[RMDB]
RNA sequence: GGGAACGACUCGAGUAGAGUCGAAAAGUUCAGUCGUUCGCGACUGAACAAACUGUGAAGCGCGAAAACUCAGAAAACAAACGGCAACGCGCGUAUCGCCGAAAACCCUGCAGUUCGCUGCAGGGAAUCAAUAGGUACAGUUCGCUGUACCUAUUGAAAAAGAAACAACAACAACAAC
Reactivity to 2A3 in 0.01 (KOAc 150mM, MgCl2 10mM, bicine 150mM(pH8.5), 24C), signal-to-noise 5, nucleotides 027 to 126: g000u000u000c000a010g000u000c000g030u040u070c190g010c010g110a000c000u010g010a000a000c000a000a020a000c030u040g030u030g160a080a020g010c000g000c010g060a070a060a080a100c070u120c090a060g200a090a170a030a040c110a060a130a030c030g020g000c030a050a040c020g010c000g010c010g030u060a080u160c040g000c010c010g030a040a050a060a090c000c000c000u000g010c010a010g000u030u110c150g030c120u000g000c000a000g010g000g000a010a000
Reactivity to DMS in 0.01 (KOAc 150mM, MgCl2 10mM, bicine 150mM(pH8.5), 24C), signal-to-noise 5, nucleotides 027 to 126: g000u000u010c000a000g010u000c010g030u000u010c220g030c000g020a020c000u000g010a010a010c010a030a070a070c060u000g010u000g010a110a150g010c000g020c010g000a100a080a070a110c070u000c110a100g010a070a060a060a100c160a070a060a140c070g010g000c020a090a170c020g000c010g020c020g000u000a050u010c100g000c000c020g000a090a070a080a080c000c000c000u000g000c000a030g000u000u020c230g010c000u000g000c010a010g000g010g000a000a000